[RMDB]
RNA sequence: GGGAACGACUCGAGUAGAGUCGAAAAGUGAAUGCACGGUGUACUUGUAUAGGAUGCUGAGGGUGGCGUCAGCGAGGCAUGGGAUAGCAUGUACUCCGGAACAAGUGUGUGGCGUUGGCCAGAGGAAUAUACCUCCGACUUUCGAGUCGGAGGUAUAAAAAGAAACAACAACAACAAC
Reactivity to DMS in 0.01 (KOAc 150mM, MgCl2 10mM, bicine 150mM(pH8.5), 24C), signal-to-noise 1, nucleotides 027 to 126: g010u010g030a070a070u000g020c060a070c070g030g030u020g020u000a000c060u010u000g000u030a110u020a070g010g000a100u000g070c020u000g010a120g000g020g020u000g010g040c050g000u000c040a090g000c120g010a150g000g020c050a040u030g030g010g000a160u010a040g010c000a020u000g000u000a100c040u000c020c040g010g020a090a030c140a060a050g010u000g020u010g010u000g010g000c030g010u000u010g010g010c020c030a070g040a120g020g000a100a130
Description: This 177-nucleotide RNA was probed chemically with DMS. Values cover nucleotides 27 to 126. DMS adducts were read by reverse transcription with MarathonRT. It was measured as part of the RMDB library OK2TRN. Conditions: 150 mM KOAc, 10 mM MgCl2 and 150 mM bicine (pH 8.5), 24 C.